[RMDB]
RNA sequence: GGGAACGACUCGAGUAGAGUCGAAAAUGCAAUGGUGUCAGCGUUUGGAAGCUGAUUAUGGGGUGGAUCCCUGGAUAUGGCAGUCUCUAGAUGGCCCAUUUUUUCGUCUCAGGUCCAAACUUUGCCAGCCAUACCUUUUAUUCGUAAAAGGUAUGGCAAAAGAAACAACAACAACAAC
Reactivity to 2A3 in 0.01 (KOAc 150mM, MgCl2 10mM, bicine 150mM(pH8.5), 24C), signal-to-noise 4, nucleotides 027 to 126: u160g000c060a040a100u090g030g030u080g050u110c040a030g050c070g040u050u170u160g090g040a090a030g060c020u020g030a020u010u050a050u080g010g000g010g030u100g150g070a130u130c010c000c000u000g030g020a040u050a050u140g020g030c030a020g040u000c010u000c020u080a070g020a170u040g050g020c030c000c000a020u120u100u020u000u030u080c040g040u000c020u000c050a040g000g000u000c010c000a030a000a060c060u070u070u060g060c000c000a010
Reactivity to DMS in 0.01 (KOAc 150mM, MgCl2 10mM, bicine 150mM(pH8.5), 24C), signal-to-noise 5, nucleotides 027 to 126: u010g020c120a100a090u010g010g020u010g010u010c040a050g010c110g010u000u000u000g020g010a100a130g000c010u000g000a040u010u000a050u000g010g010g000g010u000g020g010a110u010c020c010c010u000g010g000a070u010a080u000g010g020c040a170g010u010c050u000c090u000a090g000a060u000g020g010c130c020c030a010u000u000u000u000u000u000c080g010u000c080u000c050a080g000g000u000c020c040a040a050a080c060u000u000u000g020c040c080a150